[RMDB]
RNA sequence: GGGAACGACUCGAGUAGAGUCGAAAAUAAAAAACGAUCAAAAGACACUGGACGCUACGCCGUCCUGAACAAUACUUAAGCUGCUGACGCGUCAUCAUUCCCCAAAUGACUCGGCAGUAGAGGUGCCAUUACCUCUGCAGUUCGCUGCAGAGGUAAUAAAAGAAACAACAACAACAAC
Reactivity to 2A3 in 0.01 (KOAc 150mM, MgCl2 10mM, bicine 150mM(pH8.5), 24C), signal-to-noise 5, nucleotides 027 to 126: u240a010a090a020a030a010a040c170g040a110u160c140a040a050a010a050g070a020c030a010c070u020g010g010a010c010g010c040u200a070c150g120c190c000g030u010c000c000u010g010a020a020c040a080a070u160a130c070u140u110a060a000g020c000u000g000c000u000g010a010c010g000c020g060u000c000a000u010c000a080u030u110c030c010c000c010a010a170a000u020g000a000c000u000c040g000g010c000a000g000u020a030g010a030g000g020u040g060c020c020
Reactivity to DMS in 0.01 (KOAc 150mM, MgCl2 10mM, bicine 150mM(pH8.5), 24C), signal-to-noise 3, nucleotides 027 to 126: u100a010a030a100a020a040a070c180g000a090u040c170a090a060a100a100g000a150c150a100c040u000g010g000a020c020g000c060u050a090c240g020c180c030g000u020c020c000u000g030a100a030c110a120a090u030a050c100u020u030a080a120g010c000u000g000c010u000g000a060c130g010c110g020u000c000a000u010c040a080u000u000c010c000c000c050a030a080a000u010g000a030c020u010c000g000g010c000a030g000u000a000g000a040g000g020u000g010c080c100

This 177-nucleotide RNA was probed chemically with 2A3 and DMS. Conditions: 150 mM KOAc, 10 mM MgCl2 and 150 mM bicine (pH 8.5), 24 C.